[RMDB]
RNA sequence: GGGAACGACUCGAGUAGAGUCGAAAAUCGUCUCUGUCAGCCUCGGGUGCACGUGGGCCCGCGGUCGAGCCCUAAGGCCGGGCGUGGGGCUGGGGUCGCAGGGAGAGUAACCGUGAGCCGGCGCCCAGUUCUGCAGGUGUUUCGACACCUGCAGAACAAAAGAAACAACAACAACAAC
Reactivity to 2A3 in 0.01 (KOAc 150mM, MgCl2 10mM, bicine 150mM(pH8.5), 24C), signal-to-noise 1, nucleotides 027 to 126: u070c000g070u020c000u000c000u050g170u140c030a000g020c000c000u050c090g020g000g000u030g060c040a010c060g100u120g050g030g000c000c000c020g040c020g010g000u040c040g050a030g090c010c000c010u110a140a080g000g000c020c010g050g020g000c070g020u100g000g020g080g000c040u060g030g040g010g000u020c020g000c080a070g040g000g000a030g020a050g120u040a050a030c020c000g020u040g040a050g080c010c000g000g000c000g040c000c000c000a010
The record gives the reactivity of an RNA of 177 nucleotides to 2A3. It was measured as part of the RMDB library RFM100.